[RMDB]
RNA sequence: GGGAACGACUCGAGUAGAGUCGAAAAGUUCAUCCCCUGAUCAAGGAUGCCCGACACGGUGAGGCGGAAAGCAAAUUAAAUAACGUCAACCCAUCGGGACGGUUGGCCAGUUAAGAAGUGAGGAUUCAAAAGAUCGAACCGUUCGCGGUUCGAUCAACAAUAAAUAUGGCUUCGGCCAUAUUUAUUGAAAAGAAACAACAACAACAAC
Reactivity to 2A3 in 0.01 (KOAc 150mM, MgCl2 10mM, bicine 150mM(pH8.5), 24C), signal-to-noise 6, nucleotides 027 to 156: g040u070u100c030a040u030c020c000c000c000u040g030a080u040c030a030a010g060g010a050u080g030c000c010c000g040a020c030a020c100g040g010u040g020a120g020g010c030g040g050a120a050a020g090c130a090a110a090u160u180a070a100a080u170a090a020c020g000u000c010a000a010c000c010c000a040u080c040g010g030g020a010c030g040g030u020u010g010g010c000c020a040g030u050u090a100a040g050a070a020g060u080g100a040g040g070a070u140u050c080a030a060a060a070g000a000u000c000g000a000a000c000c000g000u040u040c220g000c010g090g000u000u000c000g000a000u000c000a000a000
Reactivity to DMS in 0.01 (KOAc 150mM, MgCl2 10mM, bicine 150mM(pH8.5), 24C), signal-to-noise 3, nucleotides 027 to 156: g020u000u000c050a100u000c000c010c000c020u000g000a090u000c050a170a090g010g010a160u000g010c030c020c010g030a090c050a050c100g010g030u000g010a130g040g000c000g000g000a090a080a150g030c080a060a060a190u000u000a060a070a130u010a050a120c010g010u010c000a060a030c020c000c030a100u020c030g010g020g000a060c060g010g000u000u010g000g010c030c020a060g020u000u000a070a060g020a080a110g020u000g020a150g010g010a190u000u000c030a040a080a110a190g000a020u000c000g000a000a030c010c000g030u000u000c300g040c050g050g010u000u010c000g000a000u000c000a010a050
The data come from the RNA Mapping Database (RMDB), library M2RFPK. The record gives the reactivity of an RNA of 207 nucleotides to 2A3 and DMS. The 2A3 profile rests on 5,027 reads. The RNA was probed in 150 mM KOAc, 10 mM MgCl2 and 150 mM bicine (pH 8.5) at 24 C. Values cover nucleotides 27 to 156. For 2A3 the reverse transcriptase was SuperScript II with manganese.